[RMDB]
An RNA of 170 nucleotides, treated with 2A3 and DMS and read out base by base. The DMS profile rests on 49,964 reads. 2A3 adducts were read by reverse transcription with SuperScript II with manganese. The RNA was probed in 150 mM KOAc, 10 mM MgCl2 and 150 mM bicine (pH 8.5) at 24 C.
RNA sequence: GGGAACGACUCGAGUAGAGUCGAAAAGGGCCCAUGGAGCCGUGGGAAUCCCCAGACCUCCCUUCUCCACACUCCUUCCCCCCUGCGGGGCCCCCCCAUAAGAUGGCGAGAUCUCCACUCAUUGGGUUAGGAUUUGACUUCGGUCAAAUCAAAAGAAACAACAACAACAAC
Reactivity to 2A3 in 0.01 (KOAc 150mM, MgCl2 10mM, bicine 150mM(pH8.5), 24C), signal-to-noise 8, nucleotides 027 to 129: g030g010g010c010c000c000a010u040g030g020a050g060c080c050g040u070g010g010g000a050a120u100c030c010c000c010a030g060a110c010c020u010c010c000c000u030u000c030u010c000c010a030c010a030c040u030c000c010u040u080c010c010c000c000c000c030u070g020c130g010g000g000g040c000c000c010c000c000c000c000a070u100a050a030g060a030u070g010g020c020g020a040g010a070u030c010u000c030c000a020c020u040c010a060u040u130g010g000g000u030u060a100g050
Reactivity to DMS in 0.01 (KOAc 150mM, MgCl2 10mM, bicine 150mM(pH8.5), 24C), signal-to-noise 9, nucleotides 027 to 129: g020g010g010c040c010c020a040u040g020g000a120g040c070c090g030u030g000g010g060a110a100u000c040c030c000c100a120g020a230c040c010u010c000c000c000u000u000c030u020c000c020a070c120a130c020u030c010c040u040u010c000c000c000c010c010c040u010g000c120g010g020g020g050c000c000c020c020c040c020c050a100u030a030a030g000a100u030g000g000c070g000a080g020a080u000c070u010c000c000a040c040u020c020a080u020u030g010g010g030u000u000a060g030